Chemical mapping of a 177-nucleotide RNA with 2A3 and DMS. Reactivities are given for positions 27 through 126. The DMS profile rests on 2,399 reads. The 2A3 profile rests on 3,282 reads. It was measured as part of the RMDB library 15KREP. The RNA was probed in 150 mM KOAc, 10 mM MgCl2 and 150 mM bicine (pH 8.5) at 24 C. Reactivities are rounded to 0.1 and cut off at 0 and 3.

RNA sequence: GGGAACGACUCGAGUAGAGUCGAAAAUACCGAGCGAAGGAUACCGGUAAGGGGAGAGGAGGAAUCCCGAGGGGAUCGCCCACUAAAGAGUAGAGGAAUUCUCGGAAAGCUCUCCCAAGAAGAACCACAGUAACAGUAUGUUCGCAUACUGUUACUGAAAAGAAACAACAACAACAAC
Reactivity to 2A3 in 0.01 (KOAc 150mM, MgCl2 10mM, bicine 150mM(pH8.5), 24C), signal-to-noise 3, nucleotides 027 to 126: u040a010c000c000g010a050g040c080g110a140a050g150g040a050u070a080c030c050g020g020u040a070a070g080g010g010g000a030g000a010g040g040a040g020g150a040a020u040c010c010c010g010a020g000g010g000g010a060u060c040g080c020c020c000a040c000u130a130a150a090g150a050g060u120a000g020a060g050g020a030a020u040u000c010u010c010g020g020a090a030a020g030c000u000c010u000c020c010c000a000a000g020a010a010g020a010a050c030c010a050
Reactivity to DMS in 0.01 (KOAc 150mM, MgCl2 10mM, bicine 150mM(pH8.5), 24C), signal-to-noise 3, nucleotides 027 to 126: u000a080c000c000g010a070g020c070g030a100a100g030g000a150u000a110c080c020g020g010u020a070a140g000g010g020g010a020g000a010g010g000a140g000g000a100a090u010c060c010c010g010a080g020g010g020g000a050u000c070g000c000c000c000a070c040u010a110a120a140g010a110g000u010a070g000a200g010g010a100a050u000u000c010u000c020g000g020a030a080a170g000c010u000c000u000c000c000c010a040a040g000a080a080g000a060a100c070c060a220